[RMDB]
RNA sequence: GGGAACGACUCGAGUAGAGUCGAAAAGAAAGAAAGAAAGAAAUCUUGGCUGUGAGGACCUGCUGUGUCUAUAACGGAAGAAUUGCUGUGCUGGAGAUACAGUAGGGCUUUGGUGCUCACUGAGUAAACCCGUUCGUAAUUUCGAUUACGAACGGGUAAAAGAAACAACAACAACAAC
Reactivity to DMS in 0.01 (KOAc 150mM, MgCl2 10mM, bicine 150mM(pH8.5), 24C), signal-to-noise 2, nucleotides 027 to 126: g010a100a030a060g020a050a080a070g030a020a060a090g000a140a070a060u000c050u000u010g000g010c030u000g000u010g000a040g000g000a060c000c020u000g000c070u000g000u000g020u000c000u010a090u030a200a060c040g000g030a040a120g020a090a170u010u020g010c060u000g030u000g000c130u030g030g000a030g010a010u000a000c000a010g010u000a020g010g000g000c050u000u000u010g020g030u000g000c010u000c010a040c040u000g000a040g000u020a060a160
Reactivity to 2A3 in 0.01 (KOAc 150mM, MgCl2 10mM, bicine 150mM(pH8.5), 24C), signal-to-noise 2, nucleotides 027 to 126: g070a010a080a000g070a040a080a000g130a010a050a000g150a030a050a020u020c040u000u050g110g000c040u040g020u040g050a040g020g070a050c000c000u020g010c000u000g000u000g010u000c000u060a120u090a150a040c010g010g100a040a020g080a270a170u190u250g100c090u060g010u110g060c010u050g020g050a000g000a000u000a000c000a000g000u000a010g000g000g030c000u130u060u080g060g030u120g010c000u000c010a040c030u070g040a000g030u070a000a070

Source: RMDB libraries RFM100 and RFMREP, as collected in RNAgym. Chemical mapping of a 177-nucleotide RNA with DMS and 2A3. The 2A3 profile rests on 1,237 reads. Values cover nucleotides 27 to 126. For DMS the reverse transcriptase was MarathonRT. The reactions ran in a buffer of 150 mM KOAc, 10 mM MgCl2 and 150 mM bicine (pH 8.5), at 24 C.